[RMDB]
RNA sequence: GGGAACGACUCGAGUAGAGUCGAAAACUUGCCCGGGGCUUCUGUCGGGGCGUGACCGGACCGGGCUGGCUUAUGAAGGGUGUCCCGGCUCUUCAUAAGCGAGAUUUUACGGGAUAGCCCGAUUGUGGCCUGCCGGUAGGCACCAAUCGGGUGAAAGCAAUAAAACGUCCUUCGGGACGUUUUAUUGAAAAGAAACAACAACAACAAC
Reactivity to 2A3 in 0.01 (KOAc 150mM, MgCl2 10mM, bicine 150mM(pH8.5), 24C), signal-to-noise 1, nucleotides 027 to 156: c070u050u140g000c000c000c000g020g010g010g050c130u070u040c030u150g080u110c040g030g060g090g070c060g100u140g040a020c030c040g010g000a000c000c020g000g000g040c010u010g010g020c010u000u000a000u030g020a000a020g000g020g030u010g020u000c010c000c000g000g000c000u010c010u020u000c000a020u000a010a000g010c000g000a010g000a000u080u190u130u250a040c000g000g000g000a000u000a010g010c000c000c000g000a020u000u020g030u070g030g000c020c000u040g070c050c050g270g090u240a020g010g010c030a030c020c010a010a000u000c000g000g000g000u000g000a000a000a000g040
The record gives the reactivity of an RNA of 207 nucleotides to 2A3. Conditions: 150 mM KOAc, 10 mM MgCl2 and 150 mM bicine (pH 8.5), 24 C.